Chemical mapping of a 177-nucleotide RNA with DMS and 2A3.
For DMS the reverse transcriptase was MarathonRT.
It was measured as part of the RMDB library M2PK50.
Conditions: 150 mM KOAc, 10 mM MgCl2 and 150 mM bicine (pH 8.5), 24 C.
Reactivities are rounded to 0.1 and cut off at 0 and 3.
Reactivities are given for positions 27 through 126.
RNA sequence: GGGAACGACUCGAGUAGAGUCGAAAAGAGAUGUAGUUCGCUACAUCUCAAACAUAAACAUGACAAAAUGCAACGGAGGCACCGAAGCCAUAAAAGUAAAAAAAAGUACGUUGUUCGCAACGUACAACGAUAGCAAAUACUUCGGUAUUUGCUAUCGAAAAGAAACAACAACAACAAC
Reactivity to DMS in 0.01 (KOAc 150mM, MgCl2 10mM, bicine 150mM(pH8.5), 24C), signal-to-noise 3, nucleotides 027 to 126: g000a000g010a020u000g010u000a000g030u000u010c290g030c000u000a000c000a010u000c000u000c000a010a150a070c130a110u010a080a060a090c100a050u010g010a090c090a060a040a100a060u000g000c050a050a070c060g000g010a100g010g010c050a020c040c010g010a060a160g000c020c050a040u010a020a060a070a060g000u020a000a000a020a070a070a090a120a090g010u000a010c000g020u000u000g000u000u000c270g010c000a000a010c000g010u000a000c010a040a050
Reactivity to 2A3 in 0.01 (KOAc 150mM, MgCl2 10mM, bicine 150mM(pH8.5), 24C), signal-to-noise 5, nucleotides 027 to 126: g000a000g000a000u000g000u000a010g010u030u080c220g010c120u000a010c010a010u000c000u000c000a000a010a010c030a030u230a050a120a020c060a090u150g120a030c050a030a150a030a070u120g020c000a040a020c050g040g030a060g080g010c050a020c050c040g080a050a010g000c020c010a030u120a060a130a030a010g120u190a070a060a110a020a010a020a000a000g010u000a000c000g000u000u020g030u050u050c220g000c070a000a000c010g000u000a000c000a000a000